[RMDB]
RNA sequence: GGGAACGACUCGAGUAGAGUCGAAAAGAAUCUCGGUGUCUAUUAUGAUGGUGAGAGCCGAUCGUACAUAAUAGUGCGAGGCGGAGCAUGAGAGUCUUUGCUGAGAGGUUUAGGCUCGAAAUGCGAAGGGAAAUCUUUUGUUCGCAAAAGAUUUCCCAAAAGAAACAACAACAACAAC
Reactivity to 2A3 in 0.01 (KOAc 150mM, MgCl2 10mM, bicine 150mM(pH8.5), 24C), signal-to-noise 3, nucleotides 027 to 126: g080a070a130u030c000u010c010g120g200u040g020u030c080u050a300u190u110a240u300g060a000u050g040g300u070g010a050g010a010g080c010c040g030a020u020c040g010u030a050c010a000u250a210a030u070a200g000u000g010c000g010a000g030g110c020g000g000a020g000c000a000u050g010a000g000a000g070u000c000u050u040u030g010c000u030g010a040g000a040g110g000u000u030u000a000g000g000c000u000c000g000a020a020a000u000g000c000g030a110a060
Reactivity to DMS in 0.01 (KOAc 150mM, MgCl2 10mM, bicine 150mM(pH8.5), 24C), signal-to-noise 2, nucleotides 027 to 126: g020a100a080u010c010u000c020g010g050u020g040u030c030u000a100u000u040a060u050g010a120u010g000g000u020g000a070g000a110g030c020c010g000a180u010c110g010u010a080c000a030u040a110a080u020a060g000u000g010c020g000a000g010g000c000g000g000a220g000c040a000u010g000a300g000a000g010u020c000u000u000u000g030c010u020g000a250g000a160g000g010u030u000u000a000g000g000c000u010c000g000a020a020a020u000g010c010g000a060a100